[RMDB]
RNA sequence: GGGAACGACUCGAGUAGAGUCGAAAAUUUUCUGAAAUUCACUGAUACAUUAAUUUUAACUCAAUCUUAUUGUAGUGUUUCCUCACUGACACUGGAAACUAAGGUUUUAUACCAUGCAUUAUUAGUAGUACAUCACCAAGUUCGCUUGGUGAUGUACAAAAGAAACAACAACAACAAC
Reactivity to DMS in 0.01 (KOAc 150mM, MgCl2 10mM, bicine 150mM(pH8.5), 24C), signal-to-noise 1, nucleotides 027 to 126: u000u000u040u000c030u010g000a050a130a130u010u010c010a050c090u000g010a160u000a030c050a020u000u000a060a010u000u000u000u000a060a150c180u030c110a020a040u000c010u020u000a090u000u000g010u010a020g010u000g000u010u000u000c040c030u000c070a090c080u000g040a050c100a130c070u000g010g000a050a020a060c090u000a020a100g010g000u000u010u020u000a070u010a120c030c040a080u000g040c120a090u000u000a070u000u000a090g000u000a090
Reactivity to 2A3 in 0.01 (KOAc 150mM, MgCl2 10mM, bicine 150mM(pH8.5), 24C), signal-to-noise 1, nucleotides 027 to 126: u000u000u000u020c040u000g020a010a090a020u230u140c040a000c080u100g010a040u060a130c020a070u040u080a050a050u010u070u010u100a200a000c010u020c120a030a130u000c040u030u160a050u070u020g110u100a050g080u000g020u000u010u060c000c020u030c040a000c120u070g060a010c000a010c120u040g060g000a040a010a020c060u050a100a160g000g020u000u000u030u110a110u060a060c000c050a040u190g000c010a020u100u040a060u120u010a120g030u000a040